Annotation:
The record gives the reactivity of an RNA of 207 nucleotides to 2A3. The reactions ran in a buffer of 150 mM KOAc, 10 mM MgCl2 and 150 mM bicine (pH 8.5), at 24 C.
[RMDB]
RNA sequence: GGGAACGACUCGAGUAGAGUCGAAAAAGCGUAGCGGUACGCCGCUACGCAAGGCGCAUUUGAACUGUAUUGUACGCCUUGCAUAGAGCAAAAGUACUAAAAAAACGUGCCGUUACGACGGCACGAAAAAACAUCCAUUGGUUCGCCAAUGGAUGAAGCCUGCUUUAAUGUUCGCAUUAAAGCAGGCAAAAGAAACAACAACAACAAC
Reactivity to 2A3 in 0.01 (KOAc 150mM, MgCl2 10mM, bicine 150mM(pH8.5), 24C), signal-to-noise 2, nucleotides 027 to 156: a040g030c000g000u000a000g010c000g000g000u010a030c110g040c030c000g000c000u010a000c000g030c000a000a000g000g000c010g010c080a060u070u090u270g110a120a110c080u070g060u200a090u120u110g040u050a020c000g000c000c000u010u000g000c040a110u080a130g120a000g030c010a110a000a030a050g060u050a040c070u120a110a050a050a020a000a020a020c010g000u000g000c020c010g010u040u050a090c300g000a000c000g040g000c000a000c000g000a000a000a000a030a000a000c000a000u000c000c000a000u010u010g010g010u010u040c100g000c100c000a000a000u010g000g000a020u000g000a000a010
Description: The data come from the RNA Mapping Database (RMDB), library M2RFPK.